RNA sequence: GGGAACGACUCGAGUAGAGUCGAAAAGAUAUGGAUUUGGCAUCGAUCUCAUAGACUCGGAAACGAGUUUGAGGGAGCCAGUCCUAAGUCAAAGCAUCAGACAAAUGUUCGCAUUUGUCUGAUGCAAGUUACUGAGUUACUUCGGUAACUCAGUAACAAAAGAAACAACAACAACAAC
Reactivity to DMS in 0.01 (KOAc 150mM, MgCl2 10mM, bicine 150mM(pH8.5), 24C), signal-to-noise 4, nucleotides 027 to 126: g010a060u000a300u010g000g000a020u000u010u010g030g020c020a300u010c170g000a060u010c000u000c010a070u010a110g010a040c000u000c000g010g000a090a090a200c000g010a010g000u000u000u000g000a010g000g000g000a020g010c010c000a010g000u000c000c000u000a040a120g000u000c030a090a070a140g000c000a000u000c000a000g000a010c000a000a000a000u000g010u010u010c210g020c000a010u000u000u000g000u000c000u000g010a000u000g010c000a010a010
Reactivity to 2A3 in 0.01 (KOAc 150mM, MgCl2 10mM, bicine 150mM(pH8.5), 24C), signal-to-noise 5, nucleotides 027 to 126: g020a010u080a040u170g030g010a050u290u300u300g030g000c050a180u300c220g100a100u030c020u000c000a090u100a220g150a050c010u000c010g020g020a050a060a040c000g000a000g000u010u010u040g000a000g000g010g010a020g000c000c000a010g020u000c000c000u020a150a040g060u040c060a070a050a060g000c000a000u000c000a000g010a010c000a000a010a000u040g030u080u140c300g000c190a010u010u000u000g010u000c000u010g000a000u000g000c010a010a000